[RMDB]
This 177-nucleotide RNA was probed chemically with 2A3 and DMS. The DMS profile rests on 14,349 reads. Reactivities are given for positions 27 through 126. For 2A3, 2,855 sequencing reads were counted. DMS adducts were read by reverse transcription with MarathonRT. The reactions ran in a buffer of 150 mM KOAc, 10 mM MgCl2 and 150 mM bicine (pH 8.5), at 24 C.
RNA sequence: GGGAACGACUCGAGUAGAGUCGAAAAUCGUUUUCUCUUAUUCGCCCUCAGAGAAGAGCGUCCUAGUUGGGAAGACUAUAUAUAUUUGUGGGUGUAUAGUUUUGUCUGGGAGCAGACGGAGGAGUCGGGAUAAUUUAAAUUUCGAUUUAAAUUAUCCAAAAGAAACAACAACAACAAC
Reactivity to 2A3 in 0.01 (KOAc 150mM, MgCl2 10mM, bicine 150mM(pH8.5), 24C), signal-to-noise 3, nucleotides 027 to 126: u070c020g000u010u020u010u010c010u000c000u010u070a100u070u060c020g020c010c000c000u000c020a030g020a000g010a170a010g030a020g030c010g040u010c000c000u030a050g030u060u110g020g000g010a010a000g000a000c000u000a000u000a000u000a000u010a070u020u080u060g080u070g040g070g000u010g010u000a010u010a010g020u000u000u020u060g140u000c010u000g000g000g030a060g060c010a020g020a040c000g000g010a030g000g010a050g030u110c040g030
Reactivity to DMS in 0.01 (KOAc 150mM, MgCl2 10mM, bicine 150mM(pH8.5), 24C), signal-to-noise 5, nucleotides 027 to 126: u050c040g010u010u010u010u000c010u010c000u010u010a110u020u020c080g000c020c010c030u000c190a070g000a050g000a040a050g000a060g000c040g000u010c000c020u010a090g000u020u010g000g010g010a080a040g000a040c000u010a000u000a010u010a020u010a110u020u030u010g020u020g000g020g020u000g000u010a010u010a010g000u000u000u010u000g010u000c010u010g010g000g040a160g020c020a060g010a030c080g000g010a080g010g000a040g010u000c060g010